[RMDB]
RNA sequence: GGGAACGACUCGAGUAGAGUCGAAAAGACGAACGCUGGCGGCGUGCCUAAUACAUGCAAGUCGAGCGGACCAAAGGGAGCUUGCUCCUAGAGGUUAGCGGCGAACGGGUGAGUAACACGUGGGCAAGUGCUACAUUCUGUUCGCAGAAUGUAGCACAAAAGAAACAACAACAACAAC
Reactivity to 2A3 in 0.01 (KOAc 150mM, MgCl2 10mM, bicine 150mM(pH8.5), 24C), signal-to-noise 1, nucleotides 027 to 126: g060a040c050g030a120a000c050g010c050u030g050g030c000g010g000c020g040u030g010c030c010u090a100a030u140a070c050a010u100g070c040a040a130g040u010c010g070a030g010c010g030g000a020c000c000a020a000a000g010g020g000a000g000c050u110u100g020c000u070c000c000u020a020g010a010g020g000u000u040a040g020c010g050g000c000g030a020a010c000g000g000g030u030g060a040g000u010a100a020c020a000c050g050u090g000g030g040c050a120a060
Reactivity to DMS in 0.01 (KOAc 150mM, MgCl2 10mM, bicine 150mM(pH8.5), 24C), signal-to-noise 3, nucleotides 027 to 126: g010a120c100g000a090a200c060g000c030u000g000g000c050g010g000c010g030u010g000c060c060u000a110a100u000a130c070a010u020g020c030a060a140g010u000c010g010a100g050c020g000g030a030c010c010a000a300a300g050g000g000a020g010c030u000u000g020c020u000c000c000u000a020g000a300g000g000u000u000a040g000c030g000g000c010g000a080a030c050g000g020g000u000g020a110g030u000a020a060c070a020c080g020u000g010g010g020c090a110a060